The record gives the reactivity of an RNA of 207 nucleotides to DMS and 2A3.
[RMDB]
RNA sequence: GGGAACGACUCGAGUAGAGUCGAAAAAGUGCACUAGGUACGCCUAGUGCACAUUCCAGGACAUACUGCUGAGGAUGACAAAAAUGCAGUUGGAGUCCUCAACUGGAUAGGCUACGGCCUAUCCAGAAAAAGACUUGGUUGUUCGCAACCAAGUCAAGGUAAUCAUUGACUUCGGUCAAUGAUUACCAAAAGAAACAACAACAACAAC
Reactivity to DMS in 0.01 (KOAc 150mM, MgCl2 10mM, bicine 150mM(pH8.5), 24C), signal-to-noise 1, nucleotides 027 to 156: a130g000u000g020c020a030c010u000a000g010g030u010a040c300g050c060c000u010a000g000u000g050c000a000c000a010u000u000c000c030a160g030g020a190c070a200u000a030c070u000g010c000u040g000a200g050g040a190u000g050a300c180a000a040a060a040a160u000g020c040a060g010u000u000g030g020a240g010u000c000c020u020c080a080a010c030u000g040g000a010u000a030g030g040c000u000a110c300g080g040c010c000u000a000u010c000c000a000g000a010a040a050a120a070g000a060c010u010u000g030g020u000u000g040u000u060c250g020c020a040a000c000c020a000a010g010u000c050a000a040
Reactivity to 2A3 in 0.01 (KOAc 150mM, MgCl2 10mM, bicine 150mM(pH8.5), 24C), signal-to-noise 2, nucleotides 027 to 156: a000g010u010g000c010a000c010u010a000g010g020u050a030c190g100c000c010u000a000g020u000g020c000a000c000a000u000u000c000c000a020g000g000a010c030a050u160a010c020u020g000c010u020g020a020g080g060a180u230g100a130c090a040a090a030a050a050u110g010c000a000g010u010u030g100g090a100g010u010c000c000u010c030a030a130c000u000g000g010a000u000a000g000g000c000u010a010c230g020g000c000c000u010a000u000c000c000a000g000a000a000a000a000a000g000a010c010u000u000g010g000u020u000g030u050u160c180g010c090a000a000c000c000a000a000g000u020c000a030a030

Description:
The RNA was probed in 150 mM KOAc, 10 mM MgCl2 and 150 mM bicine (pH 8.5) at 24 C. 2A3 adducts were read by reverse transcription with SuperScript II with manganese. The 2A3 profile rests on 1,421 reads. Source: RMDB library M2RFPK, as collected in RNAgym.